[RMDB]
RNA sequence: GGGAACGACUCGAGUAGAGUCGAAAAUGCGGCUAGAGCGUGAUUGACGGCUACGAUCGUCCUCGGACGCAUCCAGUGCUGUAGAGGAUCGUUACUCGGCUCGGUUUCUACCUUGCCGGGGUGGUCGGUAACUGUUUCUGUUCGCAGAAACAGUUACAAAAGAAACAACAACAACAAC
Reactivity to DMS in 0.01 (KOAc 150mM, MgCl2 10mM, bicine 150mM(pH8.5), 24C), signal-to-noise 2, nucleotides 027 to 126: u000g030c020g020g000c020u000a080g030a050g000c050g030u000g000a220u020u000g000a110c040g020g010c030u010a090c120g000a050u000c050g010u000c020c010u000c150g030g000a040c090g000c090a030u000c100c100a110g000u040g010c010u000g000u020a100g010a060g010g000a050u000c030g000u000u010a090c030u000c010g000g000c010u000c120g000g000u000u000u010c300u020a080c010c000u000u000g010c000c000g020g020g000g000u000g010g010u000c020g000
Reactivity to 2A3 in 0.01 (KOAc 150mM, MgCl2 10mM, bicine 150mM(pH8.5), 24C), signal-to-noise 2, nucleotides 027 to 126: u060g000c030g030g050c030u030a030g020a030g160c020g020u050g040a110u030u070g020a000c000g010g000c010u080a050c060g050a050u030c010g030u000c010c000u000c020g110g150a020c030g000c020a010u050c080c040a090g030u060g040c020u070g030u080a040g010a040g080g040a030u030c010g050u050u060a110c000u020c020g010g020c020u000c020g000g000u100u240u000c030u050a020c000c010u000u020g040c000c000g020g000g000g000u010g000g000u020c020g030
This 177-nucleotide RNA was probed chemically with DMS and 2A3. The reactions ran in a buffer of 150 mM KOAc, 10 mM MgCl2 and 150 mM bicine (pH 8.5), at 24 C. The DMS profile rests on 2,161 reads.